Record summary:
The record gives the reactivity of an RNA of 177 nucleotides to DMS and 2A3. For 2A3, 8,474 sequencing reads were counted. Conditions: 150 mM KOAc, 10 mM MgCl2 and 150 mM bicine (pH 8.5), 24 C.
RNA sequence: GGGAACGACUCGAGUAGAGUCGAAAAUUGUGGUCAAGACCUUGGCCUAGUAUCCAAGGUUGUCAAGGUUCCUAUUGACUUAACAAUGAUUGAGUUUAUGUUAUGGUGUAAGGAUGGACAGGGGAAACCAUUUUUAUACUUUCGAGUAUAAAAAUGGAAAAGAAACAACAACAACAAC
Reactivity to DMS in 0.01 (KOAc 150mM, MgCl2 10mM, bicine 150mM(pH8.5), 24C), signal-to-noise 9, nucleotides 027 to 126: u000u000g030u000g010g010u010c040a050a080g000a020c000c010u000u000g000g000c160c060u000a110g010u010a160u010c050c040a040a020g000g000u000u000g020u010c070a050a060g010g010u000u000c060c080u000a130u000u000g010a030c010u000u010a080a030c020a040a040u000g000a140u000u000g010a100g010u010u000u000a040u010g010u000u000a070u000g010g020u000g000u000a050a060g000g000a070u000g010g000a050c070a080g000g010g000g000a120a100a150
Reactivity to 2A3 in 0.01 (KOAc 150mM, MgCl2 10mM, bicine 150mM(pH8.5), 24C), signal-to-noise 5, nucleotides 027 to 126: u010u020g010u030g000g040u050c020a040a000g010a030c010c000u000u000g000g010c000c020u030a060g060u080a060u060c050c020a030a000g000g000u020u070g030u050c010a020a040g060g020u030u080c000c010u030a090u020u060g010a000c000u030u070a060a010c030a020a120u100g040a190u100u150g050a070g140u070u070u070a100u110g100u070u080a090u160g050g030u050g020u070a070a040g050g010a050u060g020g000a020c040a040g000g000g000g040a050a030a020